[RMDB]
RNA sequence: GGGAACGACUCGAGUAGAGUCGAAAACGGUUUUCGAACCGCUACGACCGUAGGAGGAGAACUACCUCACCUACAUACGUUGAAAUACUGUUCGAAAGAGCAGUAUGGAGUAUGAGGUGAGGCUCCUCCUAAACGGCAUCUUACAGUUCGCUGUAAAGAGAUGAUGUUGAUUCGUCAACAUCAUCUCAAAAGAAACAACAACAACAAC
Reactivity to DMS in 0.01 (KOAc 150mM, MgCl2 10mM, bicine 150mM(pH8.5), 24C), signal-to-noise 2, nucleotides 027 to 156: c010g010g030u010u000u000u000c160g000a060a010c000c000g000c020u000a050c030g030a040c000c000g040u010a010g020g000a050g000g010a190g040a120a110c040u010a280c000c000u000c010a030c000c000u000a200c000a010u000a000c000g010u000u010g000a240a190a010u000a030c000u000g020u000u000c020g010a170a150a260g030a040g020c010a000g000u000a000u010g000g010a190g010u000a000u000g000a090g020g020u010g010a000g030g000c040u000c010c000u000c000c000u000a000a010a090c010g020g080c040a050u000c020u000u000a060c060a060g020u000u000c130g010c000u000g000u000a030a100a200
Reactivity to 2A3 in 0.01 (KOAc 150mM, MgCl2 10mM, bicine 150mM(pH8.5), 24C), signal-to-noise 8, nucleotides 027 to 156: c020g000g070u040u040u110u140c210g100a030a010c010c000g020c090u120a100c110g190a230c000c000g010u020a010g010g010a000g040g050a010g000a070a100c150u230a100c200c000u010c010a000c000c000u200a300c020a000u000a000c020g220u200u040g000a010a000a000u000a000c000u010g010u020u000c010g030a140a080a070g000a030g000c000a000g000u000a000u000g000g000a020g000u010a000u010g000a010g010g000u000g000a000g000g000c000u000c000c000u000c000c000u000a000a000a000c000g010g000c010a070u030c040u040u040a000c000a030g020u040u090c170g070c110u020g040u120a050a110a090